The record gives the reactivity of an RNA of 177 nucleotides to 2A3 and DMS. The data come from the RNA Mapping Database (RMDB), library RFMREP. The RNA was probed in 150 mM KOAc, 10 mM MgCl2 and 150 mM bicine (pH 8.5) at 24 C. High 2A3 reactivity points to a flexible backbone, as in loops and unpaired stretches. DMS adducts were read by reverse transcription with MarathonRT.
RNA sequence: GGGAACGACUCGAGUAGAGUCGAAAACUCCGCUUUUAGCCUCUUUACAGUGCUGCCUUGUCUAAUCAUGUUCAAGCAGCAUUGUACAGGGCUAUGACAGCGUAGAAAACCCCGUCUUCGGACGGGGCUUUUCCAAUACCUUCGGGUAUUGGAAAAGAAAAGAAACAACAACAACAAC
Reactivity to 2A3 in 0.01 (KOAc 150mM, MgCl2 10mM, bicine 150mM(pH8.5), 24C), signal-to-noise 3, nucleotides 027 to 126: c000u010c010c010g000c000u060u160u010u020a030g010c010c010u180c020u060u000u000a000c000a000g010u000g010c010u010g010c010c060u000u010g010u000c010u060a180a240u160c130a140u160g120u180u050c010a010a000g000c000a000g000c000a010u000u000g000u000a000c010a000g000g000g010c000u010a000u000g010a010c080a010g000c010g030u080a030g200a040a120a020a040c000c000c000c000g010u000c000u040u040c210g100g000a000c010g000g000g020g010
Reactivity to DMS in 0.01 (KOAc 150mM, MgCl2 10mM, bicine 150mM(pH8.5), 24C), signal-to-noise 3, nucleotides 027 to 126: c020u000c020c000g000c020u000u000u010u000a000g010c000c000u020c010u000u000u010a010c010a010g020u000g000c000u000g010c190c020u000u000g010u000c040u010a100a130u030c290a110u010g020u020u000c020a010a040g000c010a000g000c000a000u000u010g010u000a000c120a030g000g000g000c000u010a000u000g000a090c240a020g010c020g000u000a130g010a090a080a050a270c010c010c000c000g010u000c000u000u010c180g010g000a000c000g020g000g000g010